RNA sequence: GGGAACGACUCGAGUAGAGUCGAAAAAACCAAAUGCUGGCUUCGAUGGCACUCAUUUUGGGUACCGUGAUUCUGUUCAAAAUGAAAAAAGAGAAGUAUGUGUGGGUGACGAUCAUUCCAACCAUUAUGAGUAAUGAUCGUUCGCGAUCAUUACUCAAAAAGAAACAACAACAACAAC
Reactivity to 2A3 in 0.01 (KOAc 150mM, MgCl2 10mM, bicine 150mM(pH8.5), 24C), signal-to-noise 1, nucleotides 027 to 126: a020a000c050c000a030a000a010u090g020c030u080g070g000c000u000u000c060g090a120u180g010g000c010a010c050u000c010a010u030u040u060u030g060g030g000u010a080c020c020g000u030g010a110u150u100c050u060g050u050u050c020a060a070a020a000u050g150a180a000a000a000a000a000g130a000g000a060a030g020u050a040u110g060u000g020u060g050g020g020u050g000a030c020g020a030u100c010a040u130u010c060c040a090a070c010c030a070u140u150a080
Reactivity to DMS in 0.01 (KOAc 150mM, MgCl2 10mM, bicine 150mM(pH8.5), 24C), signal-to-noise 2, nucleotides 027 to 126: a150a050c010c010a050a080a030u010g010c050u000g010g000c000u010u000c060g030a160u000g000g010c070a070c100u000c010a050u000u010u000u000g010g040g020u000a040c090c070g010u010g020a070u030u000c100u000g010u000u010c050a030a010a070a060u010g000a000a030a050a070a030a050g020a210g010a060a040g010u010a020u000g030u020g000u000g010g000g010u020g010a050c070g000a030u000c050a090u000u000c030c040a030a060c080c060a050u010u000a150
An RNA of 177 nucleotides, treated with 2A3 and DMS and read out base by base. 2A3 is a SHAPE reagent: it acylates the 2'-hydroxyl of flexible nucleotides of all four kinds. Conditions: 150 mM KOAc, 10 mM MgCl2 and 150 mM bicine (pH 8.5), 24 C. Source: RMDB library OK2TST, as collected in RNAgym.